[RMDB]
RNA sequence: GGGAACGACUCGAGUAGAGUCGAAAACGACGGCCGAACGAGUAAGGGUUCCUCAGCAAUGCUGAUCAGCUGAGGGUUAGCCGGUCCUAAGUCUGCCCGUAAGUCGAAGCAGACAACAGGGAAACAGUGAAGAUUUCCACUUCGGUGGAAAUCUUCAAAAAGAAACAACAACAACAAC
Reactivity to 2A3 in 0.01 (KOAc 150mM, MgCl2 10mM, bicine 150mM(pH8.5), 24C), signal-to-noise 2, nucleotides 027 to 126: c000g050a000c000g000g050c020c000g050a060a030c030g000a130g080u100a050a040g020g020g010u070u040c010c000u000c000a000g000c000a000a190u140g000c040u200g060a040u150c010a040g020c000u030g010a000g000g070g050u190u080a000g030c010c010g000g000u010c000c000u010a130a050g000u000c000u000g090c010c000c000g020u110a120a000g230u240c080g000a030a010g000c000a020g000a010c010a070a000c020a050g070g000g070a110a080a000c000a080g100
Reactivity to DMS in 0.01 (KOAc 150mM, MgCl2 10mM, bicine 150mM(pH8.5), 24C), signal-to-noise 2, nucleotides 027 to 126: c110g000a150c100g000g020c010c000g000a130a180c060g010a020g020u050a060a140g000g030g000u000u000c000c000u030c060a000g000c010a050a090u000g000c060u090g000a010u000c110a210g010c000u000g000a010g030g000g030u040u010a110g020c050c010g040g000u000c030c000u000a100a290g000u000c010u000g010c000c060c000g000u050a110a070g000u000c000g010a100a210g000c000a000g000a000c010a090a100c110a030g000g010g000a090a060a040c150a050g070